[RMDB]
RNA sequence: GGGAACGACUCGAGUAGAGUCGAAAACUACCUUAUCGAGGAACAUUAAAUGUCUCUUGGCCAGAUUUCCUCUGACCCUGAAAAUGAUGGCAUCAGCUGAAUAUGUGUCAACUCAACACAUGCUUUCUAGGAAUUUUCUGAGUUUACCAUAUUUAAAGGUAAGACCGGUGUUCGCACCGGUCUUACCAAAAGAAACAACAACAACAAC
Reactivity to 2A3 in 0.01 (KOAc 150mM, MgCl2 10mM, bicine 150mM(pH8.5), 24C), signal-to-noise 1, nucleotides 027 to 156: c000u110a110c000c020u070u040a100u220c090g090a000g000g040a040a060c010a050u070u110a160a070a180u060g040u000c000u000c030u110u080g050g140c000c000a040g000a190u030u000u080c040c000u020c010u040g020a090c000c000c050u040g020a040a040a140a170u070g040a040u050g010g050c040a000u000c020a100g090c050u040g000a020a000u020a040u100g060u040g000u000c050a020a040c000u020c000a000a010c060a070c000a060u170g110c030u130u190u000c050u160a100g120g060a300a270u030u180u150u050c170u110g020a000g020u000u000u040a000c000c070a000u150a070u090u160u070a190a120a000